[RMDB]
RNA sequence: GGGAACGACUCGAGUAGAGUCGAAAACAAGUUGGAAUGGUGUUUAAAUAUUCCCAACAGGACAAGGGAGAACUUACCCUUACAGAAUAUGAUGGUAAAUGUAUCUGCAUCAUAAUUCUGACCCUAGGCUAAUUAAAUUUUUCGAAAUUUAAUUAGCAAAAGAAACAACAACAACAAC
Reactivity to 2A3 in 0.01 (KOAc 150mM, MgCl2 10mM, bicine 150mM(pH8.5), 24C), signal-to-noise 8, nucleotides 027 to 126: c070a060a080g050u040u020g040g050a120a090u060g070g060u090g110u100u180u160a110a200a060u150a050u050u040c050c000c000a000a040c010a020g070g030a020c050a030a010g010g020g010a110g050a110a050c060u090u150a110c040c000c000u010u030a030c000a010g000a000a000u010a000u010g010a000u010g030g140u200a100a150a050u220g100u150a160u120c090u100g020c010a000u000c000a000u020a060a270u050u000c010u010g080a080c000c020c000u030a040g160
Reactivity to DMS in 0.01 (KOAc 150mM, MgCl2 10mM, bicine 150mM(pH8.5), 24C), signal-to-noise 7, nucleotides 027 to 126: c080a070a140g000u010u000g000g000a120a070u010g000g010u000g000u000u010u010a040a120a110u030a130u000u000c030c010c020a080a120c130a060g000g010a180c210a040a000g000g000g010a130g020a080a070c200u030u020a080c000c000c000u000u010a300c010a010g010a020a010u000a010u000g000a000u000g000g010u030a060a070a100u040g010u020a070u050c200u010g000c010a000u000c000a000u000a030a070u000u000c000u000g000a190c100c000c020u010a100g010